[RMDB]
RNA sequence: GGGAACGACUCGAGUAGAGUCGAAAACGGGCUGGUGGAUGAAAGCACCCAAGCGCCAACCAUCACGCCUGGGGGGAUCCCUGGUCUGGCCCCUACUGACAAAUACGCGCAGAUCGGGACCCUGAUCGGCGAUAUGCUCGCGCCGCUACCUGGCCCGGUAUAUAUCAUAAUUCGUUAUGAUAUAUACAAAAGAAACAACAACAACAAC
Reactivity to 2A3 in 0.01 (KOAc 150mM, MgCl2 10mM, bicine 150mM(pH8.5), 24C), signal-to-noise 3, nucleotides 027 to 156: c010g000g000g000c010u010g010g020u040g000g030a200u070g100a110a100a080g070c050a110c010c050c000a040a010g020c010g000c030c010a010a020c020c010a020u010c020a000c040g000c020c050u140g030g010g000g000g000g120a230u040c000c000c010u060g040g000u000c000u010g060g000c000c000c030c050u060a100c050u080g180a050c070a090a130a030u200a080c140g030c040g000c030a000g000a000u000c000g000g000g000a020c000c010c010u020g070a150u220c060g000g010c000g010a040u020a010u170g020c010u020c050g000c000g000c010c000g000c000u020a020c010c010u030g080g020c020c000c000g010
Reactivity to DMS in 0.01 (KOAc 150mM, MgCl2 10mM, bicine 150mM(pH8.5), 24C), signal-to-noise 1, nucleotides 027 to 156: c040g010g050g010c000u000g010g020u000g000g000a110u000g000a050a060a140g010c100a120c000c030c030a160a080g050c000g040c010c030a100a210c090c050a090u000c140a150c090g000c020c000u000g030g020g030g000g030g030a050u000c010c010c000u000g050g020u000c010u000g010g010c020c020c030c040u000a300c130u020g010a210c230a120a100a150u000a030c060g040c070g000c000a070g000a040u000c040g010g000g000a080c020c000c000u000g010a110u010c040g000g000c000g010a200u010a050u010g020c040u010c170g000c040g020c000c000g000c020u010a040c010c010u010g010g010c000c000c000g000

Source information:
This 207-nucleotide RNA was probed chemically with 2A3 and DMS. 2A3 adducts were read by reverse transcription with SuperScript II with manganese. The 2A3 profile rests on 2,738 reads. The DMS profile rests on 2,421 reads. DMS adducts were read by reverse transcription with MarathonRT. As a SHAPE reagent, 2A3 marks flexible, mostly unpaired nucleotides at the ribose 2'-OH.